[RMDB]
RNA sequence: GGGAACGACUCGAGUAGAGUCGAAAACUAUAGAUAGAUCAAUUUCUUUCCUAGACUUUUGUCUACUCGAUUCAACUAAACGAAAUUUUGUCCUUCAGCACACAUGUCUAUGUGUGCUGAAGUGAAACUAACUACUUUCGUUCGCGAAAGUAGUUAGAAAAGAAACAACAACAACAAC
Reactivity to 2A3 in 0.01 (KOAc 150mM, MgCl2 10mM, bicine 150mM(pH8.5), 24C), signal-to-noise 9, nucleotides 027 to 126: c020u020a000u050a090g010a010u030a010g010a020u060c120a140a200u180u160u010c020u030u030u020c020c010u040a100g030a300c050u020u020u030u090g040u010c000u000a000c000u010c000g020a020u040u000c010a060a060c060u120a140a060a100c090g170a120a150a160u180u190u110u170g080u040c000c000u000u000c000a000g020c000a000c000a000c000a010u030g180u270c180u300a020u010g000u050g000u000g000c000u000g000a000a000g000u000g000a000a000a000
Reactivity to DMS in 0.01 (KOAc 150mM, MgCl2 10mM, bicine 150mM(pH8.5), 24C), signal-to-noise 4, nucleotides 027 to 126: c010u000a080u030a150g000a040u000a010g000a020u020c290a120a120u020u010u000c000u000u000u000c050c040u000a050g010a160c210u000u000u000u000g010u000c010u010a010c010u000c010g000a040u000u010c010a080a300c040u020a020a060a110c180g010a060a090a160u020u020u030u000g000u000c020c000u000u010c000a010g000c010a000c010a010c000a010u000g030u060c230u030a000u010g020u000g000u000g000c010u000g000a010a000g010u000g000a050a100a170